[RMDB]
RNA sequence: GGGAACGACUCGAGUAGAGUCGAAAACUGUUAUUUUUCUGUUUGACUUUGCAUGCUUUUGUUUCACAGUCUCACAAUUGAGUUGGAAGUAAGAACCGAAGCUGAAUCCGGCUUGCUUUUUUACAUGGCUCGCAUCAAUCAUGCUGAUUUUGCAACACACGGGAGCGGGGUUCGCCCCGCUCCCGUGAAAAGAAACAACAACAACAAC
Reactivity to 2A3 in 0.01 (KOAc 150mM, MgCl2 10mM, bicine 150mM(pH8.5), 24C), signal-to-noise 1, nucleotides 027 to 156: c020u030g050u090u040a160u080u170u050u050u040c100u090g070u080u080u070g020a050c010u130u060u050g020c000a050u000g060c010u060u050u040u020g040u000u050u000c050a020c010a040g020u000c000u010c050a040c070a120a180u150u150g030a050g090u040u100g070g020a090a010g030u060a080a100g030a050a040c070c000g030a060a010g000c010u020g020a040a000u040c010c020g060g000c030u030u040g060c000u110u100u070u070u030u030a090c020a120u100g040g000c000u050c040g070c040a010u020c050a070a060u030c040a030u050g030c040u010g040a050u020u040u040u090g060c040a090a080c020a000
Structure probing data (2A3) for a 207-nucleotide construct. For 2A3, 531 sequencing reads were counted. For 2A3 the reverse transcriptase was SuperScript II with manganese. The data come from the RNA Mapping Database (RMDB), library OK3TST.